[RMDB]
RNA sequence: GGGAACGACUCGAGUAGAGUCGAAAAAAAAAGUGAGGGAUAUCACUGAUACCUUCUGCGCUUGCGGCUCUCGGGUCCGAACCGCAUCAAGAAGGCUUCAUAAGGAUAGUUCACAGACUCGUGACCGCCGCGCAUGAUCAUCAUGUUAGGGAGCGGGACAUCAUAUCGAUUUCGAUCGAUAUGAUGUAAAAGAAACAACAACAACAAC
Reactivity to 2A3 in 0.01 (KOAc 150mM, MgCl2 10mM, bicine 150mM(pH8.5), 24C), signal-to-noise 1, nucleotides 027 to 156: a000a000a000a030a000g030u050g000a050g000g150g070a090u040a020u120c060a050c110u070g010a010u020a040c000c000u000u030c010u000g050c000g010c080u020u080g000c000g010g000c000u000c000u000c030g000g040g060u070c040c010g000a140a040c020c010g050c030a030u040c010a000a040g020a070a000g030g030c030u110u030c050a100u070a100a010g030g000a030u080a030g060u070u020c000a030c060a030g050a010c020u010c040g040u020g020a040c000c000g040c050c020g030c030g000c000a000u020g000a030u100c090a020u040c010a010u070g020u070u030a050g080g000g000a090g000c010g000g010g030
Reactivity to DMS in 0.01 (KOAc 150mM, MgCl2 10mM, bicine 150mM(pH8.5), 24C), signal-to-noise 2, nucleotides 027 to 156: a100a070a100a020a110g010u000g000a070g020g020g020a110u000a060u000c010a060c040u050g010a190u000a050c040c030u000u000c000u000g020c120g020c060u000u020g020c000g010g020c010u000c000u000c060g010g000g030u000c070c090g020a100a020c000c010g000c060a050u010c000a060a050g010a080a040g040g030c040u000u000c050a090u000a130a110g010g000a070u010a060g010u000u000c000a090c100a160g010a080c030u000c040g020u000g000a100c020c010g000c020c170g010c060g030c000a040u000g000a190u000c170a100u010c040a010u000g020u000u010a100g080g000g000a230g040c070g020g010g000
The data come from the RNA Mapping Database (RMDB), library OK3TST. The record gives the reactivity of an RNA of 207 nucleotides to 2A3 and DMS.